[RMDB]
RNA sequence: GGGAACGACUCGAGUAGAGUCGAAAACAGCUAUCGUAUUUCAUGUCGUAAUAGUAGUCACGUUAGGGUGAUAUAACGAGGCGAGAGUUAUAUCAUCAUAGUGCGAUUUCUAUUAUGACAUAAAAUACUUAUAGUGAGAUUUCGAUCUCACUAUAAGAAAAGAAACAACAACAACAAC
Reactivity to 2A3 in 0.01 (KOAc 150mM, MgCl2 10mM, bicine 150mM(pH8.5), 24C), signal-to-noise 9, nucleotides 027 to 126: c040a020g090c060u160a080u280c090g050u030a030u010u020u020c040a000u000g000u000c000g010u000a000a000u000a000g030u010a000g010u000c000a000c040g010u010u010a020g020g000g010u000g000a000u000a000u000a000a010c040g030a090g200g090c150g060a120g030a000g070u000u000a000u000a000u000c000a000u000c000a000u000a000g010u010g010c010g000a000u000u030u000c000u000a000u000u000a000u000g000a000c000a000u000a000a000a000a000u020a010
Reactivity to DMS in 0.01 (KOAc 150mM, MgCl2 10mM, bicine 150mM(pH8.5), 24C), signal-to-noise 5, nucleotides 027 to 126: c060a140g010c170u020a050u030c140g010u000a010u000u000u000c050a000u000g000u000c000g010u000a010a000u000a000g000u000a010g010u000c000a020c000g020u000u000a010g000g000g020u000g000a010u000a000u000a000a000c010g010a170g010g010c110g010a040g000a200g000u000u000a000u000a000u000c000a000u000c000a040u000a010g000u000g010c050g000a020u000u000u000c000u000a010u000u000a010u000g000a000c000a000u000a010a000a000a000u000a020